[RMDB]
RNA sequence: GGGAACGACUCGAGUAGAGUCGAAAAAGAGGCGAUACGUCGCCUCAAGCUUGGUGCUUAGCUUCUUUCACCAAGCAUAUUACACGCGAAUAACCGCCAAAGGAGAAACACUGACUACGGUCAGUGAGGAAGUUGGUUCGGUUCGCCGAACCAACAAGACCAAAGACAAGUUCGCUUGUCUUUGGUCAAAAGAAACAACAACAACAAC
Reactivity to DMS in 0.01 (KOAc 150mM, MgCl2 10mM, bicine 150mM(pH8.5), 24C), signal-to-noise 1, nucleotides 027 to 156: a080g020a030g060g040c000g090a090u000a070c280g050u000c020g020c000c000u010c020a010a060g000c030u000u000g000g050u010g010c050u000u000a060g000c100u000u000c010u000u000u000c000a020c000c000a010a060g000c000a110u000a020u000u000a120c010a180c110g010c080g020a110a200u000a090a130c050c030g040c020c130a040a060a060g010g010a110g000a200a080a210c020a040c020u000g000a020c000u010a090c300g070g010u000c000a010g000u030g000a060g020g000a100a140g020u010u000g000g020u000u000c000g020g000u000u000c300g000c030c000g000a010a000c020c000a000a000c000a020a040
Reactivity to 2A3 in 0.01 (KOAc 150mM, MgCl2 10mM, bicine 150mM(pH8.5), 24C), signal-to-noise 3, nucleotides 027 to 156: a000g000a000g010g010c010g000a010u020a060c230g120u010c000g030c000c000u000c000a010a010g000c000u000u010g000g020u010g000c040u030u030a060g040c010u090u020c000u000u030u020c000a000c000c000a000a000g010c000a000u050a010u020u100a030c070a020c030g060c020g030a060a050u080a150a090c050c010g050c070c120a050a030a010g040g000a010g050a050a110a000c000a000c010u000g000a000c000u010a010c140g080g000u000c000a000g000u000g000a000g020g020a120a110g000u000u000g000g020u000u000c000g000g040u020u080c070g030c040c000g000a000a000c010c000a000a000c000a000a000